The record gives the reactivity of an RNA of 207 nucleotides to 2A3 and DMS. Reactivities are rounded to 0.1 and cut off at 0 and 3. Conditions: 150 mM KOAc, 10 mM MgCl2 and 150 mM bicine (pH 8.5), 24 C. 2A3 adducts were read by reverse transcription with SuperScript II with manganese. The DMS profile rests on 5,015 reads.
RNA sequence: GGGAACGACUCGAGUAGAGUCGAAAAUCGAUCAGGAGAGACUAGCUUCAGGACUUCCUUCUCUCUCAGCUGACUCUCUUCCUAGGAAGAGAGCUUCAGUCAGUCUCCUUCAGGAAGAGAGUCCUGAGACUCUUCCUGAAGGAUCAGAGCUAGAGUCAAGUUUUACAGUAUUCGUACUGUAAAACUUAAAAGAAACAACAACAACAAC
Reactivity to 2A3 in 0.01 (KOAc 150mM, MgCl2 10mM, bicine 150mM(pH8.5), 24C), signal-to-noise 3, nucleotides 027 to 156: u130c040g050a040u080c050a070g060g020a010g000a000g020a030c010u010a010g010c010u110u090c110a070g050g070a070c020u120u070c020c020u080u020c020u000c000u010c000u010c020a000g000c000u000g000a010c000u000c000u000c010u000u000c020c010u110a200g160g010a000a000g010a000g000a000g000c000u040u020c000a010g010u010c040a010g050u010c010u000c040c000u000u000c010a000g000g010a010a010g020a000g000a010g100u070c030c070u080g010a020g010a020c000u000c000u010u000c000c000u000g000a000a000g010g000a010u030c050a020g030a010g000c010u030a010g010a030g130u140c070
Reactivity to DMS in 0.01 (KOAc 150mM, MgCl2 10mM, bicine 150mM(pH8.5), 24C), signal-to-noise 2, nucleotides 027 to 156: u010c080g030a150u000c060a100g010g010a110g010a170g010a120c010u010a060g010c050u010u000c050a130g030g010a020c110u000u010c030c020u000u000c000u000c010u000c020u000c030a090g000c020u000g050a030c000u000c000u000c000u000u000c000c040u000a240g020g020a050a020g000a030g010a020g000c010u010u000c010a050g060u010c070a110g000u000c080u000c000c000u000u000c000a030g010g010a030a030g010a090g000a110g040u010c040c020u020g010a110g000a070c010u000c000u000u000c000c000u010g000a040a010g000g020a030u000c040a070g000a120g010c010u010a100g000a200g010u010c090